Source: RMDB library M2RFPK, as collected in RNAgym. The record gives the reactivity of an RNA of 207 nucleotides to DMS and 2A3. 2A3 adducts were read by reverse transcription with SuperScript II with manganese. For DMS, 6,403 sequencing reads were counted.
RNA sequence: GGGAACGACUCGAGUAGAGUCGAAAAAAUAAUUGGCGAAACUCGUUUCGCGUUGGCUGCCUAAUUCAAGGAAUUAGCGUGCCUUCAUGCUAAGGAUUUGAUAUCUGCUAAAACCCGGUGCAUUCAUAAGACUUUUGCUUGUUCGCAAGCAAAAGAAACAAAACACAUGAUUCGUCAUGUGUUUUGUAAAAGAAACAACAACAACAAC
Reactivity to DMS in 0.01 (KOAc 150mM, MgCl2 10mM, bicine 150mM(pH8.5), 24C), signal-to-noise 3, nucleotides 027 to 156: a070a080u000a040a110u010u010g020g030c000g020a160a110a030c040u000c170g020u000u010u010c010g040c040g030u010u000g030g030c020u000g020c080c050u000a030a070u000u000c020a100a100g020g020a240a160u000u000a010g030c020g050u000g010c150c050u000u000c040a060u000g000c030u000a150a140g020g000a300u000u000u010g010a150u000a050u000c080u000g030c070u010a050a040a060a120c030c010c030g000g000u000g000c020a080u000u000c040a080u000a120a120g000a130c010u000u000u010u000g030c010u000u000g000u000u000c300g040c000a020a020g010c010a020a000a000a010g000a090a090
Reactivity to 2A3 in 0.01 (KOAc 150mM, MgCl2 10mM, bicine 150mM(pH8.5), 24C), signal-to-noise 5, nucleotides 027 to 156: a010a020u270a030a070u070u070g020g000c000g020a030a040a060c040u040c090g030u010u030u020c030g020c010g040u020u030g010g010c050u080g030c040c030u030a060a030u010u020c110a160a050g110g020a050a030u010u000a000g020c030g060u040g010c020c000u060u110c050a040u070g000c020u040a030a050g040g010a050u030u030u050g050a040u100a070u170c060u100g020c030u070a040a040a070a120c020c010c000g030g030u070g010c040a040u000u170c020a020u100a200a070g070a120c000u000u000u000u010g000c000u000u010g030u050u090c220g000c090a010a000g000c000a000a010a000a000g030a000a000